[RMDB]
RNA sequence: GGGAACGACUCGAGUAGAGUCGAAAAUAAAACAGUGCGUGGUAGCACUACCAUGACCAUGUUACGGCACAUGGUCAGCCGAGUACAGCUUCGCCUGUACUCAGCGAACAACAACAACAACAAAAAAUCACAACAUCUUGUUCGCAAGAUGUUGUGAAAAAGAAACAACAACAACAAC
Reactivity to 2A3 in 0.01 (KOAc 150mM, MgCl2 10mM, bicine 150mM(pH8.5), 24C), signal-to-noise 3, nucleotides 027 to 126: u120a000a060a020a000c060a020g000u010g000c030g040u080g160g210u240a030g000c030a010c010u000a030c010c030a120u120g010a010c000c000a020u000g020u000u150a140c190g070g040c120a010c000a010u010g000g000u000c010a000g010c000c010g000a010g010u010a000c000a010g000c040u140u230c150g030c040c010u010g000u000a010c010u020c000a000g020c030g050a060a020c010a020a010c010a010a000c000a010a010c000a030a000c030a030a090a000a010a000a030
Reactivity to DMS in 0.01 (KOAc 150mM, MgCl2 10mM, bicine 150mM(pH8.5), 24C), signal-to-noise 2, nucleotides 027 to 126: u000a120a050a090a130c150a030g020u010g010c010g050u030g020g000u000a190g030c010a020c000u000a110c100c040a300u010g010a030c000c000a020u000g010u000u000a130c180g000g010c140a110c000a000u000g010g020u020c010a010g010c000c000g020a000g000u000a000c010a000g000c030u050u010c300g030c210c000u000g000u000a000c000u000c020a020g000c000g030a110a060c060a030a000c000a000a090c020a040a030c060a000a000c070a010a040a070a040a040a040
This 177-nucleotide RNA was probed chemically with 2A3 and DMS. Source: RMDB library M2PK90, as collected in RNAgym. The RNA was probed in 150 mM KOAc, 10 mM MgCl2 and 150 mM bicine (pH 8.5) at 24 C. Values cover nucleotides 27 to 126. The 2A3 profile rests on 3,062 reads.